[RMDB]
RNA sequence: GGGAACGACUCGAGUAGAGUCGAAAACCAUGGCCAAGCAUAAUGCCGGCAUUUAUGGUGUGGCCCAUAAGAUCGAGUUUAUCCACGCCGAUUUUCUGCAGUUUGCGGCCAGCACAAAGCUGCGCCAUAAUUAAUUUACCUUCGGGUAAAUUAAUUAAAAAGAAACAACAACAACAAC
Reactivity to DMS in 0.01 (KOAc 150mM, MgCl2 10mM, bicine 150mM(pH8.5), 24C), signal-to-noise 8, nucleotides 027 to 126: c000c000a120u000g000g010c000c060a280a090g010c010a060u010a210a110u000g010c010c030g020g010c020a040u000u000u010a040u010g010g000u000g020u000g010g000c190c020c060a120u010a080a100g010a110u010c060g000a070g010u000u000u000a100u010c020c020a030c050g000c010c010g000a060u000u010u000u010c140u010g010c020a150g010u000u010u000g020c030g010g000c000c010a020g000c020a040c060a050a120a150g010c010u000g000c220g020c020c010a020
Reactivity to 2A3 in 0.01 (KOAc 150mM, MgCl2 10mM, bicine 150mM(pH8.5), 24C), signal-to-noise 4, nucleotides 027 to 126: c000c000a030u020g000g000c030c010a090a030g000c020a050u040a150a030u160g000c030c000g040g020c040a040u060u140u090a180u200g010g000u020g000u020g020g010c000c030c050a110u200a140a130g090a080u120c070g040a040g060u040u120u110a070u060c010c000a010c020g000c010c000g030a000u050u070u100u040c040u120g010c020a120g130u110u280u210g060c020g020g000c000c000a000g010c020a010c050a030a120a020g020c020u020g010c050g010c050c000a010